[RMDB]
RNA sequence: GGGAACGACUCGAGUAGAGUCGAAAAAUGAAAAACUUCAUAGGUAUCUUACAGUGAUAAGAGAAAAUACAGAAAAAAGUGCUGCUCUUGUCCAAAAGAUGCAAUAUACGUCUGACUUAGAAAAGUCCAGGGUAAUAAAUUUCGAUUUAUUACCCUGAAAAGAAACAACAACAACAAC
Reactivity to DMS in 0.01 (KOAc 150mM, MgCl2 10mM, bicine 150mM(pH8.5), 24C), signal-to-noise 2, nucleotides 027 to 126: a050u040g000a090a090a050a050a050c090u000u010c020a070u010a050g000g000u000a020u010c010u000u020a140c170a140g000u040g000a020u010a010a000g000a010g000a170a040a060a060u030a180c020a010g030a010a050a170a140a140a200g000u020g020c110u020g000c010u000c000u020u000g000u000c000c010a080a100a000a010g000a000u000g000c000a010a020u000a040u020a050c230g000u000c030u030g000a030c010u000u020a160g000a050a110a230a020g000u000c020
Reactivity to 2A3 in 0.01 (KOAc 150mM, MgCl2 10mM, bicine 150mM(pH8.5), 24C), signal-to-noise 5, nucleotides 027 to 126: a000u120g050a060a050a010a030a040c070u130u080c070a070u090a130g080g040u010a010u010c000u030u050a080c080a110g040u090g270a010u010a000a010g010a000g070a070a100a030a090u170a010c040a010g150a060a140a030a040a040a040g130u140g070c040u020g010c000u000c000u010u010g020u010c010c000a070a300a000a010g000a000u010g000c010a050a070u080a020u030a140c070g050u010c080u060g030a020c000u030u020a080g120a210a300a050a000g010u000c020
Notes:
Conditions: 150 mM KOAc, 10 mM MgCl2 and 150 mM bicine (pH 8.5), 24 C. An RNA of 177 nucleotides, treated with DMS and 2A3 and read out base by base. Values cover nucleotides 27 to 126. For 2A3 the reverse transcriptase was SuperScript II with manganese.